About this RNA
The record gives the reactivity of an RNA of 177 nucleotides to DMS and 2A3. The data come from the RNA Mapping Database (RMDB), library OK1LIB. The 2A3 profile rests on 3,743 reads. The RNA was probed in 150 mM KOAc, 10 mM MgCl2 and 150 mM bicine (pH 8.5) at 24 C. For 2A3 the reverse transcriptase was SuperScript II with manganese.
[RMDB]
RNA sequence: GGGAACGACUCGAGUAGAGUCGAAAAUGGUUACCUCCAGCCUAAAGAAUCUGGCAGCAUCGAUAUAUUAAUAUAUAGUUUUGAUUAUGAGACUUAACCACAGAUUAUGUCCUGGAGCCAGAUAUGGGUAGUUUUAAUUAUUCGUAAUUAAAACUACAAAAGAAACAACAACAACAAC
Reactivity to DMS in 0.01 (KOAc 150mM, MgCl2 10mM, bicine 150mM(pH8.5), 24C), signal-to-noise 4, nucleotides 027 to 126: u010g010g000u010u020a080c090c070u020c010c020a100g020c040c030u030a060a100a080g010a110a060u000c000u010g010g020c010a090g020c030a030u000c150g000a040u010a020u030a010u010u030a060a100u060a130u030a090u020a050g010u010u020u010u020g000a070u010u030a100u010g010a100g000a010c020u020u010a050a090c140c140a080c190a100g000a100u000u000a020u000g000u000c000c040u000g000g000a120g000c020c000a010g010a030u030a040u030g000g020
Reactivity to 2A3 in 0.01 (KOAc 150mM, MgCl2 10mM, bicine 150mM(pH8.5), 24C), signal-to-noise 6, nucleotides 027 to 126: u100g000g050u080u100a120c020c010u040c010c010a040g000c010c020u140a140a120a040g090a070a100u020c010u000g010g010c030a030g040c020a050u060c020g020a000u010a010u000a030u110u190a230a110u210a020u040a020u070a180g050u090u040u060u130g050a070u030u240a060u300g040a060g020a060c010u040u070a030a010c030c030a070c050a080g060a120u060u030a030u120g030u000c000c020u030g050g040a020g010c000c000a010g050a020u060a100u110g150g000